[RMDB]
This 177-nucleotide RNA was probed chemically with DMS and 2A3. For DMS the reverse transcriptase was MarathonRT. It was measured as part of the RMDB library RFMREP. The DMS profile rests on 2,029 reads.
RNA sequence: GGGAACGACUCGAGUAGAGUCGAAAAAGUGACAUGGUGGUCAGGCUGCCGGAUAGCAGAUAGAGCGUGUGAUUCUUUGGAAACAGCAAAGGAUGGUUUAUCUGAUCUGAAAGACAGUAUUGAUGAAGAUUUAACAGCUGUUCGCAGCUGUUAAAUCAAAAGAAACAACAACAACAAC
Reactivity to DMS in 0.01 (KOAc 150mM, MgCl2 10mM, bicine 150mM(pH8.5), 24C), signal-to-noise 2, nucleotides 027 to 126: a080g010u000g000a060c100a060u000g000g000u000g010g000u000c050a040g030g000c030u000g020c030c030g000g010a170u010a060g020c020a030g000a060u000a040g000a050g020c090g030u000g040u010g020a070u000u000c010u000u000u010g020g010a090a100a100c300a130g010c010a020a020a030g010g010a030u000g010g010u000u000u000a040u010c010u000g000a060u020c030u010g000a100a080a110g000a030c070a030g020u000a100u000u000g000a090u010g020a120a100
Reactivity to 2A3 in 0.01 (KOAc 150mM, MgCl2 10mM, bicine 150mM(pH8.5), 24C), signal-to-noise 2, nucleotides 027 to 126: a000g180u090g080a070c050a080u110g060g000u110g030g040u100c000a020g040g010c020u020g040c030c010g040g030a030u050a040g050c030a000g030a070u000a030g090a000g040c090g030u120g000u030g100a060u020u030c000u010u070u050g050g010a180a070a010c050a040g080c030a000a030a000g080g010a000u020g010g050u050u010u000a020u000c020u020g010a050u010c020u040g020a110a040a040g020a020c010a020g090u110a070u160u120g130a180u050g080a110a050